RNA sequence: GGGAACGACUCGAGUAGAGUCGAAAACAUCUUUCCUCCCUACACAGUGACUCCAGCUUGGGAGGGGCAGGGCUAGGCUGAGCCAGCACUCCCUGUGGUGUCUGCCUGCCACGUGCAGCUCCGGAGUAAAACCUGGAGAAGUUCGCUUCUCCAGGAAGUGUGCUGUAAUCUUCGGAUUACAGCACACAAAAGAAACAACAACAACAAC
Reactivity to 2A3 in 0.01 (KOAc 150mM, MgCl2 10mM, bicine 150mM(pH8.5), 24C), signal-to-noise 2, nucleotides 027 to 156: c010a040u080c080u110u120u060c020c000u030c000c000c000u110a050c150a030c070a120g060u030g120a010c020u000c030c000a000g030c050u060u050g000g000g020a000g000g010g010g030c010a020g000g040g030c000u290a010g010g040c010u030g010a020g220c120c020a030g040c000a020c030u030c010c000c000u040g000u020g010g010u020g090u000c050u040g020c000c020u050g050c000c030a150c060g180u170g010c020a010g010c030u040c040c070g020g020a000g000u020a030a040a040a040c030c000u000g000g000a000g000a000a000g000u040u100c080g030c060u010u000c000u000c020c000a000g000g000a000a000